[RMDB]
RNA sequence: GGGAACGACUCGAGUAGAGUCGAAAAGCAAGUUCUAGUGGAGAAUAAGGCGAAUAUCAAAAAAGUAGAACAAUCAUUCCUUACUUAUUUCAAAGCAUAUGCUUCUUCAAAGGACCACGGCCUACCAAACCUUGUGCUUAUUCGUAAGCACAAGGUUAAAAGAAACAACAACAACAAC
Reactivity to DMS in 0.01 (KOAc 150mM, MgCl2 10mM, bicine 150mM(pH8.5), 24C), signal-to-noise 2, nucleotides 027 to 126: g050c060a140a160g040u000u010c030u040a040g000u000g010g000a160g000a070a090u020a090a150g010g000c110g000a070a120u010a100u020c120a030a100a040a120a000a040g000u000a020g020a020a030c090a050a110u020c100a130u000u010c020c050u020u000a090c030u000u000a090u010u000u000c160a080a060a040g000c000a060u010a080u020g010c090u000u000c020u010u000c070a130a090a060g020g000a070c010c040a070c170g000g000c060c050u010a100c080c060a050
Reactivity to 2A3 in 0.01 (KOAc 150mM, MgCl2 10mM, bicine 150mM(pH8.5), 24C), signal-to-noise 1, nucleotides 027 to 126: g020c000a080a000g000u000u040c010u100a100g120u040g120g020a050g010a030a050u040a100a000g070g040c020g050a080a040u070a050u200c100a020a040a080a060a030a000g060u060a020g040a070a050c080a040a080u130c020a030u080u090c020c000u060u080a070c000u010u060a130u130u100u110c080a070a070a030g040c000a080u130a040u300g020c010u030u000c000u020u030c020a140a080a040g000g000a010c000c010a000c070g000g010c000c000u010a020c050c040a000